[RMDB]
RNA sequence: GGGAACGACUCGAGUAGAGUCGAAAAAACCCAAGUCCCGGUGAAUGUCGGCCGUAACUAUAACGGUCCUAAGGUAGCGAAAUUCCUUGUCGGGUAAGUUCCGACCUGCACGAAUCGUGAAACGAGUGAAUGCCCUUUUAUUCGUAAAAGGGCAUUCAAAAGAAACAACAACAACAAC
Reactivity to DMS in 0.01 (KOAc 150mM, MgCl2 10mM, bicine 150mM(pH8.5), 24C), signal-to-noise 3, nucleotides 027 to 126: a080a070c030c000c010a170a090g020u000c000c020c010g000g030u000g020a060a090u050g000u030c150g000g010c000c010g020u060a090a120c140u010a130u030a040a070c040g000g020u000c030c080u030a050a060g000g000u010a130g000c090g000a040a070a130u010u020c000c020u000u000g030u000c040g000g000g010u000a100a110g020u010u020c020c030g000a000c000c060u010g000c060a060c070g000a100a020u000c030g010u000g020a010a090a090c060g010a100g020u000
Reactivity to 2A3 in 0.01 (KOAc 150mM, MgCl2 10mM, bicine 150mM(pH8.5), 24C), signal-to-noise 4, nucleotides 027 to 126: a000a000c010c000c000a010a030g040u030c050c010c010g030g040u040g090a160a070u090g040u120c020g030g010c010c010g040u060a100a060c070u040a050u050a300a030c020g000g000u020c010c010u010a030a020g030g000u020a020g030c050g080a070a080a030u070u070c010c010u020u060g040u020c000g050g000g010u020a100a020g000u070u050c000c010g000a000c000c000u060g000c030a020c060g090a080a080u070c010g010u020g090a050a080a030c050g010a030g010u020